[RMDB]
RNA sequence: GGGAACGACUCGAGUAGAGUCGAAAAGAUAUCUUCGGAUAUCAUUACGCGUACUACGAGGAGGGAGCUGAUGUCUCCCCACCGUGGUCCCAAAUAGGACCACGAGGACAUACAGCAUCGAUCUCCUCGUAUCGCAACGACCUUGCUUCGGCAAGAAUACCGUAAAGGUGUUCGCACCUUUACGGUAAAAAGAAACAACAACAACAAC
Reactivity to DMS in 0.01 (KOAc 150mM, MgCl2 10mM, bicine 150mM(pH8.5), 24C), signal-to-noise 2, nucleotides 027 to 156: g000a020u000a000u000c000u010u000c270g030g040a010u000a000u000c000a230u000u010a110c050g000c020g010u000a130c030u000a010c010g020a010g000g000a040g000g000g000a050g000c020u000g010a100u000g000u000c020u000c130c080c010c030a100c220c030g000u000g030g010u000c000c010c020a050a110a300u000a040g000g000a020c000c000a010c020g000a200g000g010a040c000a060u000a150c010a050g010c000a280u000c130g030a080u000c020u000c000c010u000c000g000u000a010u020c000g000c120a120a100c020g020a090c040c010u000u000g020c010u000u000c140g050g020c020a040a100g000a180a150
Reactivity to 2A3 in 0.01 (KOAc 150mM, MgCl2 10mM, bicine 150mM(pH8.5), 24C), signal-to-noise 4, nucleotides 027 to 156: g000a010u060a000u020c050u100u170c300g060g000a000u020a000u000c000a010u140u300a100c150g020c000g010u090a130c060u020a000c040g000a000g000g010a000g010g000g000a020g000c000u000g010a000u000g030u000c020u050c060c010c000c020a000c000c010g000u010g000g010u020c000c010c020a190a270a060u300a070g000g000a000c000c010a000c010g000a010g000g000a000c000a000u300a180c000a020g000c010a170u300c020g050a090u020c000u000c000c000u020c000g000u000a000u010c000g020c000a000a060c060g120a060c010c000u010u010g000c000u010u040c140g110g010c000a000a010g020a060a070
The record gives the reactivity of an RNA of 207 nucleotides to DMS and 2A3. The 2A3 profile rests on 3,264 reads. The RNA was probed in 150 mM KOAc, 10 mM MgCl2 and 150 mM bicine (pH 8.5) at 24 C.